[RMDB]
RNA sequence: GGGAACGACUCGAGUAGAGUCGAAAAUCGCAUUGUUGUUUACAUCUGGAAUGGCAAUGUUAAAUUUAUCAGAUUAGUUAAUUUGAUUAGCCGUGUGUUAUGGCGUACAAAUUGAUGAAAUUCAAAUGAUAGCACUAUAAGCGUAGGCGCCAAUGUAUCCUAUAUAAGCGUUCGCGCUUAUAUAGGAAAAAGAAACAACAACAACAAC
Reactivity to DMS in 0.01 (KOAc 150mM, MgCl2 10mM, bicine 150mM(pH8.5), 24C), signal-to-noise 3, nucleotides 027 to 156: u010c070g030c070a130u000u020g010u000u000g020u000u000u000a130c060a090u010c050u000g000g000a080a070u000g010g030c010a050a040u000g010u000u000a060a070a170u000u010u010a040u010c020a060g000a050u000u000a300g000u000u010a020a000u000u000u010g000a140u000u010a220g020c000c010g020u000g040u000g020u010u000a030u000g010g020c000g010u000a060c040a020a050a050u000u000g000a050u010g010a100a080a130u000u000c070a060a080a110u000g000a120u000a050g010c020a040c030u000a090u000a080a120g010c090g020u000a070g000g040c020g000c030c040a020a080u000g000u010a130
Reactivity to 2A3 in 0.01 (KOAc 150mM, MgCl2 10mM, bicine 150mM(pH8.5), 24C), signal-to-noise 3, nucleotides 027 to 156: u080c010g000c040a010u010u000g000u000u010g030u010u010u010a050c020a020u020c030u050g010g020a050a020u020g030g000c000a010a000u020g000u050u070a040a100a090u160u150u060a080u060c000a000g000a030u010u040a020g020u000u020a000a000u020u000u040g080a130u080u100a030g010c000c010g100u080g000u000g010u140u050a030u060g000g000c000g000u020a020c010a010a020a000u010u010g030a000u010g020a030a020a070u200u210c090a010a020a040u050g050a020u070a030g020c000a000c050u080a040u050a300a060g020c030g020u040a070g150g020c030g010c050c020a000a010u000g010u020a050